Background: Structure probing data (2A3 and DMS) for a 177-nucleotide construct. The RNA was probed in 150 mM KOAc, 10 mM MgCl2 and 150 mM bicine (pH 8.5) at 24 C.
[RMDB]
RNA sequence: GGGAACGACUCGAGUAGAGUCGAAAAGCGGGGCCGACGGUCUCCAGGGCGCGGGCGCCGGUGAUGUCCCAGUGGGUGGCGUCGACGGCGAUGUCGGUGAUGGUGCCCGCGAUGUGGUGGCGCCAUACCGGUCCAUAGUAUUCGUACUAUGGACCGGAAAAGAAACAACAACAACAAC
Reactivity to 2A3 in 0.01 (KOAc 150mM, MgCl2 10mM, bicine 150mM(pH8.5), 24C), signal-to-noise 2, nucleotides 027 to 126: g030c070g000g000g040g030c020c030g060a090c050g050g080u080c040u000c050c010a040g030g010g070c060g000c040g080g020g020c030g000c000c020g020g030u070g000a010u010g030u000c000c000c010a000g190u270g120g040g050u140g010g000c010g000u020c000g050a020c020g000g000c060g020a020u060g020u010c020g010g080u090g090a130u170g030g000u030g010c000c050c030g010c020g010a050u140g070u090g090g100u100g030g000c020g000c000c000a000u030a030
Reactivity to DMS in 0.01 (KOAc 150mM, MgCl2 10mM, bicine 150mM(pH8.5), 24C), signal-to-noise 3, nucleotides 027 to 126: g010c220g000g000g010g010c020c010g000a050c080g010g030u000c060u000c030c040a070g010g000g010c100g020c110g000g000g040c020g000c010c000g010g000u000g000a040u000g010u010c000c010c010a280g020u010g010g000g010u010g010g000c000g010u010c000g000a090c050g010g010c070g010a040u010g000u000c010g010g010u020g010a090u010g000g010u000g010c010c000c000g010c060g000a040u000g020u010g010g020u010g010g010c000g000c000c010a080u010a150

For DMS the reverse transcriptase was MarathonRT.